RNA sequence: GGGAACGACUCGAGUAGAGUCGAAAAGAGCACGUUGAAGGUGUCGCUGUUGUUGUCGGUGGCGCUGUUCUUCGUCUGGAUGAUCACGGUCGCGUUCCUCUACCUGGUGCUCGGCGGUAUGGGCGUAUAGACUUCUUCCUUUCGAGGAAGAAGUCUAAAAAGAAACAACAACAACAAC
Reactivity to 2A3 in 0.01 (KOAc 150mM, MgCl2 10mM, bicine 150mM(pH8.5), 24C), signal-to-noise 2, nucleotides 027 to 126: g040a000g020c040a000c040g040u050u070g040a050a050g020g000u040g010u070c020g020c030u020g020u120u000g030u000u020g110u090c000g020g060u000g000g010c020g000c010u060g120u070u000c000u010u030c000g060u040c030u050g090g000a070u090g010a040u190c060a030c110g030g010u030c040g000c030g050u070u030c010c000u020c000u000a070c000c020u030g020g000u050g000c020u020c070g070g020c030g020g010u110a130u070g020g000g000c020g000u070a080
Reactivity to DMS in 0.01 (KOAc 150mM, MgCl2 10mM, bicine 150mM(pH8.5), 24C), signal-to-noise 1, nucleotides 027 to 126: g010a070g000c110a010c060g040u000u000g020a100a110g020g000u010g000u000c010g030c010u000g040u010u000g030u000u000g040u000c050g000g000u010g000g000c000g000c100u000g010u020u030c020u000u000c030g060u020c060u000g000g000a090u030g000a110u020c080a050c120g000g000u010c060g000c000g030u030u010c020c000u000c100u030a090c020c040u030g000g000u020g010c000u040c050g020g000c050g010g000u000a020u030g050g000g010c040g040u000a170
Notes:
Structure probing data (2A3 and DMS) for a 177-nucleotide construct. DMS (dimethyl sulfate) methylates the pairing face of unpaired adenines and cytosines. The RNA was probed in 150 mM KOAc, 10 mM MgCl2 and 150 mM bicine (pH 8.5) at 24 C. It was measured as part of the RMDB library OK1LIB. Values cover nucleotides 27 to 126. For 2A3 the reverse transcriptase was SuperScript II with manganese.